[RMDB]
RNA sequence: GGGAACGACUCGAGUAGAGUCGAAAAGACUAGCGACAAAGUGACUUCCGGAUAGCGUUCACGGAAAGGCUUAAUUAACGGCAUCAGAAAGUGCAGCACCACUGGAGUUGCGGCAUCGAUCCGUAACCACACGGAAGUAGUUCGCUACUUCCGUGUGAAAAGAAACAACAACAACAAC
Reactivity to DMS in 0.01 (KOAc 150mM, MgCl2 10mM, bicine 150mM(pH8.5), 24C), signal-to-noise 4, nucleotides 027 to 126: g020a110c070u000a070g010c030g010a030c120a090a090a060g000u010g010a130c060u000u000c020c020g000g000a090u000a100g020c100g000u000u000c060a170c020g030g010a050a060a060g000g020c010u010u000a110a070u020u010a120a100c110g010g010c080a040u010c040a080g000a060a050a080g000u000g000c040a040g000c020a080c040c040a130c120u000g020g000a110g020u000u000g010c010g000g000c080a100u010c160g000a060u000c010c000g030u000a040a060c130
Reactivity to 2A3 in 0.01 (KOAc 150mM, MgCl2 10mM, bicine 150mM(pH8.5), 24C), signal-to-noise 3, nucleotides 027 to 126: g030a040c040u070a040g030c010g060a060c070a050a080a010g030u040g070a150c030u010u000c030c000g030g000a040u040a070g140c090g140u050u020c090a070c090g030g020a040a030a000g030g000c030u050u070a040a030u140u070a080a050c050g030g000c050a010u000c010a060g140a120a080a010g030u040g020c020a010g000c030a020c030c020a070c080u090g000g050a110g020u030u020g000c000g000g060c010a090u100c030g020a040u000c000c010g010u000a010a010c060